An RNA of 177 nucleotides, treated with DMS and read out base by base.

RNA sequence: GGGAACGACUCGAGUAGAGUCGAAAACAGGAGCGUUCGGCGAUAUUCAAGCAUCCUCGCUUGAUGCCACAGACAUAGUAGCCCGCACUGACAUACGGCUGCUGAAGCCUUCUGUCAAGAACAUCCAAGCACAUCAGAGUUUCGACUCUGAUGUGCUAAAAGAAACAACAACAACAAC
Reactivity to DMS in 0.01 (KOAc 150mM, MgCl2 10mM, bicine 150mM(pH8.5), 24C), signal-to-noise 1, nucleotides 027 to 126: c080a090g000g000a050g020c100g040u020u000c080g020g020c020g010a170u000a080u030u000c020a000a000g060c000a220u020c190c120u020c190g020c000u000u030g000a000u000g000c040c020a070c110a080g010a040c150a140u110a040g070u000a040g020c070c030c070g000c140a080c160u000g000a070c140a200u000a050c120g000g000c000u000g000c070u000g020a130a100g040c050c030u010u000c060u010g000u010c140a070a130g000a080a060c130a150u000c020c020a110